[RMDB]
RNA sequence: GGGAACGACUCGAGUAGAGUCGAAAAGGAUGCAACGACUCUUGCCAAUAGUAUCACCUUUAAAGACAUCACUUCACGAAUCUGAGGUGGUACGGAUUUCAAGUGGAGUAUUCUUAUAAGGGAUAGGCACCUGGUGGAUGUUCGCAUCCACCAGGUGAAAAGAAACAACAACAACAAC
Reactivity to 2A3 in 0.01 (KOAc 150mM, MgCl2 10mM, bicine 150mM(pH8.5), 24C), signal-to-noise 5, nucleotides 027 to 126: g050g010a020u060g010c030a090a050c040g120a090c020u000c000u070u040g030c010c030a110a100u100a080g080u020a030u020c030a250c050c010u020u050u150a130a120a000g010a000c050a110u090c100a040c050u150u090c070a010c110g040a050a020u000c000u030g010a000g060g040u080g010g020u050a040c010g000g000a030u070u110u080c090a180a000g000u000g020g000a010g000u000a010u030u000c000u010u080a130u060a180a070g040g000g010a040u040a100g090g000
Reactivity to DMS in 0.01 (KOAc 150mM, MgCl2 10mM, bicine 150mM(pH8.5), 24C), signal-to-noise 2, nucleotides 027 to 126: g010g000a020u020g000c020a060a120c080g000a050c010u020c010u000u010g010c040c090a160a060u010a160g020u000a030u010c010a070c000c000u000u000u010a120a030a050g000a030c300a030u010c120a050c030u000u030c080a050c080g000a040a120u000c000u000g000a030g000g020u010g000g010u020a010c050g000g000a060u000u040u000c110a090a070g020u000g010g000a050g020u010a040u010u000c010u000u020a110u030a030a050g000g000g000a030u000a080g020g020